The record gives the reactivity of an RNA of 177 nucleotides to 2A3 and DMS. The RNA was probed in 150 mM KOAc, 10 mM MgCl2 and 150 mM bicine (pH 8.5) at 24 C.

[RMDB]
RNA sequence: GGGAACGACUCGAGUAGAGUCGAAAAAAAAAAGAUAUGGAGAUAGCGAGCUUGGAUUUAUAGUUCCAGUAUGUCGGAAACGACAUACGGAACUAUUGUCAGCUCAGCUAUCUCCUAAGUCAAAAAAGACUAAUGAUAGGUUCGCCUAUCAUUAGUCAAAAGAAACAACAACAACAAC
Reactivity to 2A3 in 0.01 (KOAc 150mM, MgCl2 10mM, bicine 150mM(pH8.5), 24C), signal-to-noise 2, nucleotides 027 to 126: a000a000a030a020a000a000g080a060u090a080u190g000g000a000g000a020u000a010g020c020g010a010g010c060u210u250g180g020a030u030u300u060a020u060a020g000u000u000c010c060a030g020u010a000u010g020u000c020g020g020a090a080a080c030g000a000c000a000u000a000c000g020g000a000a000c000u000a010u000u010g000u000c000a000g030c000u000c000a000g010c000u000a000u000c010u000c000c000u000a010a000g000u000c010a020a020a000a050a060a210
Reactivity to DMS in 0.01 (KOAc 150mM, MgCl2 10mM, bicine 150mM(pH8.5), 24C), signal-to-noise 3, nucleotides 027 to 126: a010a070a070a080a080a080g020a030u010a300u000g000g000a010g010a020u000a000g040c000g000a000g000c000u000u000g030g010a010u000u000u000a010u010a000g010u000u000c000c010a160g020u000a000u000g010u000c000g010g000a100a080a210c000g000a010c000a000u000a000c010g000g010a000a000c000u000a000u000u000g010u000c000a030g010c010u000c000a060g030c010u000a000u000c000u010c000c000u000a010a050g000u020c020a010a030a070a090a120a130
In probing experiments dimethyl sulfate is read out at A N1 and C N3, which are open when not base-paired.